[RMDB]
RNA sequence: GGGAACGACUCGAGUAGAGUCGAAAAGUCUCACGAGUGCAAAGACAAAGGUAGUUGACUCCGGCGCUACCAGUACUCGAAAGAAUGCGAAAGAGUUCACGUAUUCCAACCGGAGAAGAACUCAAAAGCGAUAUAAUCGAUUCGUCGAUUAUAUCGCAAAAGAAACAACAACAACAAC
Reactivity to 2A3 in 0.01 (KOAc 150mM, MgCl2 10mM, bicine 150mM(pH8.5), 24C), signal-to-noise 6, nucleotides 027 to 126: g060u010c000u000c010a030c000g000a000g000u010g010c020a060a170a150g070a180c070a050a150a030g040g020u010a000g020u040u160g010a020c000u010c010c000g010g000c020g010c020u000a000c000c000a010g000u010a010c000u000c000g000a000a040a010g070a030a030u110g050c050g040a070a120a130g010a040g020u010u020c000a000c080g060u070a110u120u150c080c030a080a080c010c000g010g000a000g000a010a040g000a010a010c010u000c000a040a050a030a000
Reactivity to DMS in 0.01 (KOAc 150mM, MgCl2 10mM, bicine 150mM(pH8.5), 24C), signal-to-noise 3, nucleotides 027 to 126: g000u000c000u000c000a280c000g020a020g000u000g000c000a090a190a170g040a180c300a130a150a140g000g000u000a000g000u000u010g000a090c000u010c020c010g000g000c140g010c000u000a000c000c030a120g030u000a000c010u000c000g000a140a090a040g000a090a080u000g020c050g010a120a110a070g000a010g040u000u000c000a300c000g000u010a000u000u040c150c170a100a060c000c000g010g000a000g010a300a110g010a000a050c000u000c000a030a060a090a050
Source information: An RNA of 177 nucleotides, treated with 2A3 and DMS and read out base by base. Source: RMDB library OK1LIB, as collected in RNAgym. The RNA was probed in 150 mM KOAc, 10 mM MgCl2 and 150 mM bicine (pH 8.5) at 24 C. Reactivities are given for positions 27 through 126. For 2A3 the reverse transcriptase was SuperScript II with manganese.